An RNA of 177 nucleotides, treated with 2A3 and read out base by base. The 2A3 profile rests on 486 reads. Source: RMDB library OK1LIB, as collected in RNAgym.
[RMDB]
RNA sequence: GGGAACGACUCGAGUAGAGUCGAAAAGGUGGAAGCCGCGCGGUCGCUGGCGCUGGAGACGGGCGUGGCAUCGGUGACGUUAACGGCUGUCGCAGGUCGUGCCGGGAUUCACUACUCUGCGGUGCGCGGUUGCAUCCCCGUUCGCGGGGAUGCAACCAAAAGAAACAACAACAACAAC
Reactivity to 2A3 in 0.01 (KOAc 150mM, MgCl2 10mM, bicine 150mM(pH8.5), 24C), signal-to-noise 1, nucleotides 027 to 126: g110g050u170g030g170a100a060g050c000c000g000c000g000c000g000g050u140c030g000c010u090g070g000c000g010c000u000g040g070a030g040a200c100g100g000g070c040g010u000g030g010c000a000u070c060g000g020u080g020a040c020g000u020u030a010a090c000g070g000c110u190g040u070c000g000c080a060g000g000u040c000g030u080g050c070c000g030g000g080a050u070u020c010a000c070u160a000c020u040c000u200g030c010g000g070u040g040c120g000c000